[RMDB]
Source information
This 177-nucleotide RNA was probed chemically with 2A3 and DMS. DMS adducts were read by reverse transcription with MarathonRT. For 2A3 the reverse transcriptase was SuperScript II with manganese. The RNA was probed in 150 mM KOAc, 10 mM MgCl2 and 150 mM bicine (pH 8.5) at 24 C.
RNA sequence: GGGAACGACUCGAGUAGAGUCGAAAAAGCGUAGGUAGUACGCUACCUACGCAUUCUUGAACUGGAAGAGUGCCAUAAAAUCAUGACAAAGUACGUGAUAUUAUGCACAUUUUCUAGUUCAAGACAAUAUUUUACCGGUAUUCGUACCGGUAAAAUAAAAAGAAACAACAACAACAAC
Reactivity to 2A3 in 0.01 (KOAc 150mM, MgCl2 10mM, bicine 150mM(pH8.5), 24C), signal-to-noise 9, nucleotides 027 to 126: a000g000c000g000u000a000g000g000u000a000g010u020a010c240g040c080u000a000c000c000u000a000c000g000c000a000u000u000c000u000u000g000a000a000c000u000g000g000a010a000g020a010g030u000g060c090c010a000u010a010a040a010a000u010c000a010u020g050a060c100a110a300a040g130u240a140c020g010u000g000a000u010a020u060u000a000u000g010c000a030c030a190u020u000u000u000c000u010a000g000u000u000c000a000a000g000a000c010a020a070
Reactivity to DMS in 0.01 (KOAc 150mM, MgCl2 10mM, bicine 150mM(pH8.5), 24C), signal-to-noise 6, nucleotides 027 to 126: a050g020c010g010u000a000g000g000u010a010g010u020a090c250g040c000u000a000c000c000u010a000c010g010c000a010u010u000c010u000u000g000a010a010c000u000g000g000a010a000g010a020g000u000g000c100c050a010u000a010a010a090a010u000c010a010u000g010a110c050a160a130a300g020u020a050c010g020u000g000a010u000a050u000u000a000u000g000c000a010c000a100u000u000u000u010c000u000a000g000u000u000c000a000a000g000a040c300a100a060